This 177-nucleotide RNA was probed chemically with DMS. DMS (dimethyl sulfate) methylates the pairing face of unpaired adenines and cytosines.
[RMDB]
RNA sequence: GGGAACGACUCGAGUAGAGUCGAAAAGAUAUGGAGGGACUAGAGCUUAACCAAUGAUGAAUUAGAGCUUUCGGAAACGAAAGCUCUAAUUUUGAGGUUAAGAACUACUCUUUUCCCUCCUAAGUCACUCGUUAUAAUCGUUCGCGAUUAUAACGAGAAAAGAAACAACAACAACAAC
Reactivity to DMS in 0.01 (KOAc 150mM, MgCl2 10mM, bicine 150mM(pH8.5), 24C), signal-to-noise 1, nucleotides 027 to 126: g010a050u000a300u000g020g000a070g000g000g000a020c070u000a010g020a030g000c030u000u010a000a000c000c000a120a090u000g020a190u010g000a000a010u000u000a000g010a020g030c030u010u000u000c010g010g010a100a060a100c030g010a010a030a000g000c000u000c000u000a000a000u000u000u000u000g000a300g040g020u000u000a000a000g010a040a030c120u010a300c020u000c000u000u000u000u000c010c000c000u000c020c000u000a010a070g000u000c030a300

For DMS the reverse transcriptase was MarathonRT.
For DMS, 1,131 sequencing reads were counted.